[RMDB]
An RNA of 207 nucleotides, treated with DMS and 2A3 and read out base by base. 2A3 adducts were read by reverse transcription with SuperScript II with manganese. Conditions: 150 mM KOAc, 10 mM MgCl2 and 150 mM bicine (pH 8.5), 24 C. For 2A3, 3,153 sequencing reads were counted.

RNA sequence: GGGAACGACUCGAGUAGAGUCGAAAACGCUAAUGCUUCGGCAUUAGCGAAAGAUAUGGAUCGUGGCAAGACAUGAACGUAGUUCGUCGGAAACGACGAACUACGUUCAACAGCUUGCACGAUCCUAAGUCAAAAGGAAACGUGUUCGCACGUUUCCCUCGUAAGUAGGUUUCGACCUACUUACGAGAAAAGAAACAACAACAACAAC
Reactivity to DMS in 0.01 (KOAc 150mM, MgCl2 10mM, bicine 150mM(pH8.5), 24C), signal-to-noise 1, nucleotides 027 to 156: c010g030c010u010a000a030u000g000c010u010u010c290g040g000c000a000u000u010a010g020c000g000a010a020a070g000a100u000a180u020g010g000a010u000c020g040u000g030g010c000a000a020g020a110c030a300u000g000a000a030c020g090u000a010g000u010u000c010g000u000c000g030g000a090a120a240c010g000a050c000g060a010a000c010u010a000c000g000u000u000c020a010a050c000a210g020c010u000u020g010c000a040c000g010a010u000c010c010u000a000a070g040u010c100a070a060a140a050g010g020a010a020a010c000g000u010g010u000u010c300g010c010a040c000g010u000u000u000c010c000
Reactivity to 2A3 in 0.01 (KOAc 150mM, MgCl2 10mM, bicine 150mM(pH8.5), 24C), signal-to-noise 2, nucleotides 027 to 156: c010g000c000u000a000a000u000g000c010u050u070c260g160g000c020a000u000u000a000g000c000g000a010a010a000g020a010u090a050u140g000g010a000u000c010g010u050g170g120c000a000a000g020a070c040a100u080g000a000a010c000g000u000a000g000u000u000c000g010u010c010g000g000a110a070a040c010g010a000c020g010a010a000c000u000a000c000g000u000u000c000a000a010c010a000g010c000u000u000g000c000a000c010g000a000u000c000c000u000a040a020g030u010c060a020a070a060a030g020g000a030a010a000c000g000u000g040u090u110c300g040c060a000c000g000u010u000u020c000c000
The data come from the RNA Mapping Database (RMDB), library RNAMAK.